[RMDB]
RNA sequence: GGGAACGACUCGAGUAGAGUCGAAAAGUCAUUCUUUGACAUGUGCCAGCUGACGUGAAGUGACUUGUGGUGACAGAGUCACACUAGGCGCUAGCACUUUCUUUUUUCUUGAUAAAACAGGUAGCCCUUUCUGUGGGGAGUCAAGAGCUGGGGCAUACCAGGUCUUCCAAUUCGUUGGAAGACCUGGAAAAGAAACAACAACAACAAC
Reactivity to 2A3 in 0.01 (KOAc 150mM, MgCl2 10mM, bicine 150mM(pH8.5), 24C), signal-to-noise 1, nucleotides 027 to 156: g040u070c020a050u190u000c040u170u050u110g070a040c010a090u050g000u050g180c000c000a010g000c070u100g040a030c000g040u030g060a030a010g000u000g000a040c010u020u010g020u060g040g180u050g040a000c060a070g220a050g060u010c000a010c020a020c010u020a000g010g030c000g000c020u030a020g030c020a000c000u010u110u040c000u000u130u110u010u000u060c040u040u040g060a090u060a110a060a060a060c020a010g110g050u060a100g070c030c020c100u050u160u060c100u070g100u130g000g000g010g030a050g040u030c000a030a010g000a030g020c010u030g010g000g000g010c000a010u000a050

The record gives the reactivity of an RNA of 207 nucleotides to 2A3.
The data come from the RNA Mapping Database (RMDB), library OK3TST.
Conditions: 150 mM KOAc, 10 mM MgCl2 and 150 mM bicine (pH 8.5), 24 C.